[RMDB]
RNA sequence: GGGAACGACUCGAGUAGAGUCGAAAAGCUCGGAGCGUAAUCGCGUCUUGACGUGAGUAGGGAUAGACUAGACUGUAGGCUAUCCCAGUGUGCAUAGCGCACAAUACGCUCAUCUACAGUCAACAAAGACAGAUCACAGUUUCGACUGUGAUCUGUCAAAAGAAACAACAACAACAAC
Reactivity to DMS in 0.01 (KOAc 150mM, MgCl2 10mM, bicine 150mM(pH8.5), 24C), signal-to-noise 1, nucleotides 027 to 126: g000c030u000c070g020g020a020g010c000g040u020a020a150u000c000g000c000g030u010c060u030u000g030a010c000g010u000g000a010g010u000a110g050g000g000a000u000a030g000a010c010u000a090g000a010c010u000g000u000a000g000g020c120u000a000u000c000c000c000a050g000u000g030u000g020c000a180u010a070g010c210g000c000a030c000a100a070u000a000c000g000c020u000c000a110u000c060u000a020c000a000g010u000c000a160a160c210a060a050a060
Reactivity to 2A3 in 0.01 (KOAc 150mM, MgCl2 10mM, bicine 150mM(pH8.5), 24C), signal-to-noise 2, nucleotides 027 to 126: g060c030u000c030g020g010a010g020c000g000u000a010a020u010c000g000c000g020u010c060u170u240g140a020c000g010u020g000a010g000u070a110g000g000g000a000u000a000g000a010c000u010a050g010a020c000u000g000u000a000g010g010c000u000a000u000c000c000c010a000g000u010g000u010g000c060a140u150a220g090c050g000c040a000c010a010a010u020a010c000g000c000u000c000a010u020c000u000a010c000a000g000u000c010a030a020c060a010a090a010
This 177-nucleotide RNA was probed chemically with DMS and 2A3.
Values cover nucleotides 27 to 126.
The data come from the RNA Mapping Database (RMDB), library M2PK90.
For DMS the reverse transcriptase was MarathonRT.
The RNA was probed in 150 mM KOAc, 10 mM MgCl2 and 150 mM bicine (pH 8.5) at 24 C.